Annotation:
Chemical mapping of a 207-nucleotide RNA with 2A3.
RNA sequence: GGGAACGACUCGAGUAGAGUCGAAAAUCACAUUUCGAUGUGAGCAGUUUCCUAAGUCACGGGAACCGUAGCGUGCCAGGAACUACGCUCGGAAACGAGCGCCGGUAAUACGCUACUCAGUACCGUGAUAUGGAUAAAACCUCUAUUCGUAGAGGAAGCCUCCAUACUCAUUCGUGAGUAUGGAGGCAAAAGAAACAACAACAACAAC
Reactivity to 2A3 in 0.01 (KOAc 150mM, MgCl2 10mM, bicine 150mM(pH8.5), 24C), signal-to-noise 1, nucleotides 027 to 156: u020c000a000c000a020u060u150u200c270g130a040u010g020u030g010a020g030c050a140g140u000u060u100c000c000u020a180a030g000u040c020a010c020g000g000g000a000a020c030c010g000u000a000g020c000g020u030g060c060c020a240g040g070a170a110c120u250a050c200g020c000u000c000g020g020a100a100a010c000g020a000g000c000g000c080c080g000g010u110a150a100u130a150c000g030c010u000a000c000u030c000a000g000u000a000c000c000g030u000g000a000u000a000u010g010g000a000u000a200a180a070a040c000c020u000c030u000a040u100u120c200g160u000a000g000a000g000g000a020a000

Conditions: 150 mM KOAc, 10 mM MgCl2 and 150 mM bicine (pH 8.5), 24 C. Reactivities are given for positions 27 through 156. It was measured as part of the RMDB library RNAMAK.